[RMDB]
RNA sequence: GGGAACGACUCGAGUAGAGUCGAAAAGAUAUGGAAUGCAGCGCACCGUUUGACGGUUAUCGGAAACGAUAACCCGAGGUGCGAACUACUGCCGCUUCCUAAGUCAAAAGUCUACUUCGGUAGACAACUCCGUAUCAUUCUUCGGAAUGAUACGGAGAAAAGAAACAACAACAACAAC
Reactivity to 2A3 in 0.01 (KOAc 150mM, MgCl2 10mM, bicine 150mM(pH8.5), 24C), signal-to-noise 1, nucleotides 027 to 126: g000a000u100a080u100g000g050a030a000u300g000c010a000g080c010g030c000a000c000c010g100u220u250u210g040a050c010g000g000u010u030a000u000c010g000g000a070a020a080c020g010a010u020a010a000c040c020c000g000a030g020g030u000g000c010g000a000a010c000u070a030c030u000g020c010c020g020c040u010u000c020c000u050a250a020g040u070c040a000a010a120a120g010u000c000u000a000c010u040u100c300g110g020u000a000g010a020c010a020a010
Reactivity to DMS in 0.01 (KOAc 150mM, MgCl2 10mM, bicine 150mM(pH8.5), 24C), signal-to-noise 2, nucleotides 027 to 126: g000a010u010a300u000g000g000a080a000u020g020c010a000g000c000g000c000a000c000c000g010u000u020u030g020a160c300g030g000u000u000a000u010c000g040g000a090a110a170c010g020a020u000a000a000c000c000c000g000a070g000g050u000g010c000g010a010a000c110u000a240c020u000g000c000c000g000c030u000u030c000c000u010a030a170g010u010c030a050a120a170a120g000u000c000u000a000c000u000u010c230g020g030u000a020g000a010c020a050a050